[RMDB]
RNA sequence: GGGAACGACUCGAGUAGAGUCGAAAAUAAGACUGUGGGCCCGAGAGAAGUCGCUCUCUCUCGCCCCAUACAUCCUCUCAGGCAUAGAGAUGACCAUUUGCCUAGGGUGAGUCUUUAAGUAGACACAGCCUAUCUAUGGCGAUGUAUCGGGGCACGGACUAAGAGGAGUAUUCGUACUCCUCUUAGUAAAAGAAACAACAACAACAAC
Reactivity to 2A3 in 0.01 (KOAc 150mM, MgCl2 10mM, bicine 150mM(pH8.5), 24C), signal-to-noise 5, nucleotides 027 to 156: u150a010a030g090a050c070u050g010u040g050g070g040c020c000c040g000a000g000a000g000a160a070g030u060c050g030c020u020c000u000c000u010c000u020c040g000c000c010c000c000a000u010a000c000a000u000c000c000u030c010u040c170a010g020g000c010a040u040a070g030a030g050a140u110g070a110c040c070a240u070u070u040g000c010c000u000a010g020g010g000u000g010a010g000u000c000u000u130u070a300a300g300u100a030g040a000c010a000c010a020g000c000c010u080a120u210c050u040a050u160g010g000c010g000a000u000g000u000a010u020c120g000g000g000g000c010a020c040g040g000
Reactivity to DMS in 0.01 (KOAc 150mM, MgCl2 10mM, bicine 150mM(pH8.5), 24C), signal-to-noise 2, nucleotides 027 to 156: u000a090a110g010a100c030u010g010u000g010g030g010c000c030c060g040a110g010a140g030a120a110g020u010c080g020c100u010c050u000c010u000c060u010c050g000c010c000c000c000a020u000a040c020a030u000c000c010u000c020u000c120a040g000g000c020a020u000a080g000a130g020a200u000g030a120c020c110a240u000u000u010g010c030c010u010a070g000g000g000u000g020a200g000u010c000u000u000u010a120a260g010u000a030g020a040c020a130c050a170g000c000c000u000a200u000c140u000a140u000g020g020c000g000a030u010g010u000a030u010c100g060g010g000g000c030a110c090g030g000

Structure probing data (2A3 and DMS) for a 207-nucleotide construct. The DMS profile rests on 6,076 reads. In probing experiments dimethyl sulfate is read out at A N1 and C N3, which are open when not base-paired. For 2A3, 4,281 sequencing reads were counted. 2A3 adducts were read by reverse transcription with SuperScript II with manganese.